[RMDB]
RNA sequence: GGGAACGACUCGAGUAGAGUCGAAAAGAUAUGGAUUCCAGACGCUUUUGACGAGCCACUGUCGGAAACGACAGAAAUGGCUCGAUAAGCGUCGGAAUCCUAAGUCAAACGCGUUCUUCGGAACGCGGGAGACAUGAGUGUUCGCACUCAUGUCUCCAAAAGAAACAACAACAACAAC
Reactivity to 2A3 in 0.01 (KOAc 150mM, MgCl2 10mM, bicine 150mM(pH8.5), 24C), signal-to-noise 2, nucleotides 027 to 126: g010a020u100a040u150g010g000a020u030u030c050c100a150g030a020c000g030c000u090u170u180u300g300a280c050g010a010g040c010c020a030c000u010g000u010c010g010g000a070a080a050c010g000a000c040a000g030a040a170a010u140g010g000c000u000c000g000a000u000a000a000g000c000g020u010c010g000g020a000a000u000c000c010u000a030a000g070u040c050a060a040a110c040g000c000g000u020u000c000u060u050c300g100g020a000a000c000g030c000g000
Reactivity to DMS in 0.01 (KOAc 150mM, MgCl2 10mM, bicine 150mM(pH8.5), 24C), signal-to-noise 2, nucleotides 027 to 126: g020a030u020a300u000g000g000a010u000u010c000c000a210g010a000c010g000c000u000u000u000u030g010a300c070g000a010g000c000c000a120c000u000g000u000c010g000g000a110a170a280c010g030a000c000a010g000a050a060a130u000g000g010c010u000c000g000a010u000a000a010g010c010g000u000c000g010g000a000a000u000c000c000u000a010a090g040u000c040a040a080a300c020g000c000g010u000u000c010u000u040c190g030g000a020a000c000g000c000g020